[RMDB]
RNA sequence: GGGAACGACUCGAGUAGAGUCGAAAAAGAUACCAGGGACGGGAAGAUCAGGGUGUGUUUAAGAGUGGCCUCAGCAUGAAAUGCAGGGCUGAAGGAGUUGGUGGUGGUUAGAUACAGGCCAUGUCCCACUUGGUAGGCGAUUCGUCGCCUACCAAGUAAAAGAAACAACAACAACAAC
Reactivity to DMS in 0.01 (KOAc 150mM, MgCl2 10mM, bicine 150mM(pH8.5), 24C), signal-to-noise 2, nucleotides 027 to 126: a060g040a230u020a110c030c020a090g000g000g010a090c080g000g000g010a070a080g000a070u000c090a100g000g020g010u010g010u010g010u010u000u000a080a100g020a110g010u010g000g010c010c010u000c030a030g030c060a040u000g000a050a040a240u010g000c060a120g010g010g010c010u000g020a070a060g010g010a100g000u010u010g010g030u000g010g030u000g000g000u000u010a040g000a140u000a050c110a060g000g000c000c070a060u000g000u000c000c030c010